The record gives the reactivity of an RNA of 177 nucleotides to 2A3 and DMS. The reactions ran in a buffer of 150 mM KOAc, 10 mM MgCl2 and 150 mM bicine (pH 8.5), at 24 C. Reactivities are given for positions 27 through 126. For DMS the reverse transcriptase was MarathonRT. The data come from the RNA Mapping Database (RMDB), libraries RFM100 and RFMREP.
RNA sequence: GGGAACGACUCGAGUAGAGUCGAAAACCGUCACAAAAAGGAUGUCUCAAGUUUGUUUGAAUUUGGACGAAUCUAUAUAUUAAAUAGUGUCUAGAUACAUCCAAGUUUAGACAAAUUUGAUACAUCCAGACAGUAGUUUUUUCGAAAACUACUGUCUAAAAGAAACAACAACAACAAC
Reactivity to 2A3 in 0.01 (KOAc 150mM, MgCl2 10mM, bicine 150mM(pH8.5), 24C), signal-to-noise 8, nucleotides 027 to 126: c040c000g170u210c100a100c110a090a090a030a030a040g010g000a000u000g000u000c000u000c020a000a010g000u000u000u000g010u000u000u000g010a000a000u000u000u010g000g000a000c020g040a050a030u000c000u000a010u000a010u000a010u060u220a180a200a240u250a090g050u030g020u020c000u010a000g000a010u010a050c020a010u000c000c000a000a000g010u000u000u000a000g000a000c000a000a000a000u000u000u000g000a000u000a000c000a000u000c000c000
Reactivity to DMS in 0.01 (KOAc 150mM, MgCl2 10mM, bicine 150mM(pH8.5), 24C), signal-to-noise 2, nucleotides 027 to 126: c040c010g050u010c230a080c180a070a050a020a190a060g000g000a000u000g030u000c080u000c000a000a010g000u000u000u000g030u000u020u000g010a000a010u000u000u000g000g000a010c040g000a090a000u000c000u000a000u000a020u000a060u040u010a090a070a270u060a160g000u000g010u000c010u000a000g000a000u000a090c130a140u000c000c000a000a000g000u010u000u020a020g000a040c000a000a000a000u010u000u000g000a000u000a020c000a000u000c000c000